[RMDB]
Structure probing data (DMS and 2A3) for a 177-nucleotide construct. DMS adducts were read by reverse transcription with MarathonRT. For 2A3 the reverse transcriptase was SuperScript II with manganese. It was measured as part of the RMDB library OK1LIB.

RNA sequence: GGGAACGACUCGAGUAGAGUCGAAAACUGCAUACCGAACAGGACCGUUGCAUUCAUGAGCUUCGGUGGUAAGCUUGAGGAGUGUCCGACGGUAAGCGUUACCGACUGCUCCUUAUAGUGUGUACGGAAUUAAUUAAAAAUUCGUUUUUAAUUAAUUAAAAGAAACAACAACAACAAC
Reactivity to DMS in 0.01 (KOAc 150mM, MgCl2 10mM, bicine 150mM(pH8.5), 24C), signal-to-noise 9, nucleotides 027 to 126: c040u020g020c070a100u020a100c020c020g010a100a080c090a120g010g000a070c010c040g010u000u000g010c050a120u010u030c150a120u040g010a080g010c000u000u000c020g010g010u020g010g010u030a050a110g000c010u000u000g010a060g000g000a050g010u010g000u010c070c110g010a110c010g010g000u000a030a110g020c140g010u010u000a050c050c020g010a090c040u020g000c010u000c010c020u000u010a060u030a040g010u010g000u010g010u020a060c040g000g010
Reactivity to 2A3 in 0.01 (KOAc 150mM, MgCl2 10mM, bicine 150mM(pH8.5), 24C), signal-to-noise 9, nucleotides 027 to 126: c020u050g010c020a050u090a120c020c020g070a140a040c040a100g050g080a010c010c010g040u030u050g010c040a060u050u210c060a060u270g130a020g020c000u000u010c020g090g020u090g010g050u180a050a010g000c000u020u020g020a010g020g020a030g010u070g060u110c080c080g060a040c010g020g020u020a050a020g230c070g110u100u040a020c010c010g010a030c020u090g020c000u030c010c000u060u060a120u080a150g050u090g020u030g020u060a020c010g010g010